[RMDB]
This 177-nucleotide RNA was probed chemically with 2A3 and DMS.
For 2A3 the reverse transcriptase was SuperScript II with manganese.

RNA sequence: GGGAACGACUCGAGUAGAGUCGAAAAGCUACUUUCUUCGGAAAGUAGCAAAUAAGAAAUGAGCCAAUAAGGACGCAAAAAGGCUCAAAAUCCGCUCCUAAAAAAGCUCCAGGUUCGCCUGGAGCAAGAGACAUAUAUCGUUCGCGAUAUAUGUCUCAAAAGAAACAACAACAACAAC
Reactivity to 2A3 in 0.01 (KOAc 150mM, MgCl2 10mM, bicine 150mM(pH8.5), 24C), signal-to-noise 2, nucleotides 027 to 126: g000c000u000a000c010u010u020u000c010u030u040c080g110g010a010a020a000g000u010a000g000c000a000a010a020u020a000a000g040a000a050a050u040g000a000g000c010c010a010a020u130a110a060g130g050a060c080g000c170a030a120a010a050a060g010g000c030u030c000a050a070a000a050u010c020c050g050c100u030c000c020u100a120a100a020a010a030a030g010c010u000c000c000a010g000g040u030u080c220g040c050c000u000g010g010a000g000c000a000a000
Reactivity to DMS in 0.01 (KOAc 150mM, MgCl2 10mM, bicine 150mM(pH8.5), 24C), signal-to-noise 2, nucleotides 027 to 126: g000c010u000a010c010u000u000u000c000u010u000c260g000g030a010a000a000g020u010a000g000c000a010a020a060u040a080a050g000a020a090a300u000g000a010g020c020c000a030a170u010a080a210g000g000a120c300g020c080a010a080a070a180a140g000g020c000u000c020a040a010a110a270u000c020c040g000c060u000c000c000u030a000a080a040a070a130a120g040c010u000c010c000a010g000g010u000u010c200g000c000c000u010g000g000a010g010c010a010a010